[RMDB]
RNA sequence: GGGAACGACUCGAGUAGAGUCGAAAAGAAAGAAAGUCUCCGUUUAUCCCACCACUGCCACCAUUAUUGCUACUGUUCAGCAGGUGCUGCUGGUGGUGAUGGUGAUAGUCUGGUGGGGGCGGUGGAACCAUACUCGCUUUUUCGAAAGCGAGUAUGGAAAAGAAACAACAACAACAAC
Reactivity to 2A3 in 0.01 (KOAc 150mM, MgCl2 10mM, bicine 150mM(pH8.5), 24C), signal-to-noise 9, nucleotides 027 to 126: g100a020a060a010g110a030a100a010g080u020c010u010c010c000g010u030u070u130a270u190c010c000c000a000c000c000a010c010u010g010c000c000a000c000c000a010u020u020a050u050u110g030c010u030a050c060u070g100u230u160c010a010g000c010a050g110g300u260g100c010u000g010c010u000g010g020u010g000g010u000g000a000u000g000g010u000g000a010u010a000g030u060c160u100g000g000u000g000g000g000g000g000c000g000g000u050g010g030a030a020
Reactivity to DMS in 0.01 (KOAc 150mM, MgCl2 10mM, bicine 150mM(pH8.5), 24C), signal-to-noise 3, nucleotides 027 to 126: g010a080a060a080g010a060a060a130g010u020c010u000c010c020g020u000u010u030a190u070c030c000c010a000c000c000a010c000u000g000c030c000a000c010c000a030u000u000a030u010u000g010c000u010a060c220u010g000u020u040c040a040g020c000a220g000g010u030g000c010u000g000c140u000g010g000u020g000g030u000g010a000u000g000g010u000g000a010u000a010g000u010c200u030g000g020u010g000g020g010g000g010c030g000g010u020g010g000a030a140